[RMDB]
RNA sequence: GGGAACGACUCGAGUAGAGUCGAAAAAAUUCCAAGUGUUGGAUAAGGUGCCUAUAGUUUUGUUCAAUACAUAUUAUGCUUUAUUUUUCACUGAGCAAAUGAAGUAAUUAAAAUCUGAGAUAAUGUGUUUGAAGCGCUUAGCACAGUGGCUGACCUAACUAUUAAAAUGAUUCGUCAUUUUAAUAGUAAAAGAAACAACAACAACAAC
Reactivity to 2A3 in 0.01 (KOAc 150mM, MgCl2 10mM, bicine 150mM(pH8.5), 24C), signal-to-noise 2, nucleotides 027 to 156: a010a010u140u000c040c010a110a040g070u030g010u050u030g010g010a080u050a130a000g070g020u000g030c000c010u130a100u120a120g020u040u050u100u190g030u060u010c020a050a010u090a160c010a010u070a040u100u070a060u060g040c000u020u020u020a040u050u110u050u040u050c060a040c120u110g110a070g090c070a050a030a140u050g010a060a020g010u110a040a100u130u120a080a160a030a020u080c070u060g020a030g000a030u010a030a080u050g010u000g030u020u010u010g000a000a000g080c010g000c110u060u070a040g020c060a030c040a070g070u060g080g020c020u010g020a010c000c000u000a030
Reactivity to DMS in 0.01 (KOAc 150mM, MgCl2 10mM, bicine 150mM(pH8.5), 24C), signal-to-noise 3, nucleotides 027 to 156: a100a110u000u000c020c010a140a300g020u010g000u000u000g010g010a110u000a070a110g010g020u000g010c050c040u000a120u000a070g010u000u000u000u010g020u000u000c030a040a030u000a010c020a060u000a030u000u000a030u000g000c020u000u000u000a050u020u010u000u010u000c060a090c060u000g010a190g020c100a120a080a060u010g000a060a050g000u000a050a090u000u000a040a040a050a090u010c090u010g000a110g010a050u000a040a030u000g030u000g010u010u010u000g010a000a080g020c160g020c040u000u000a070g020c030a040c040a110g050u010g010g040c040u010g010a120c030c030u000a130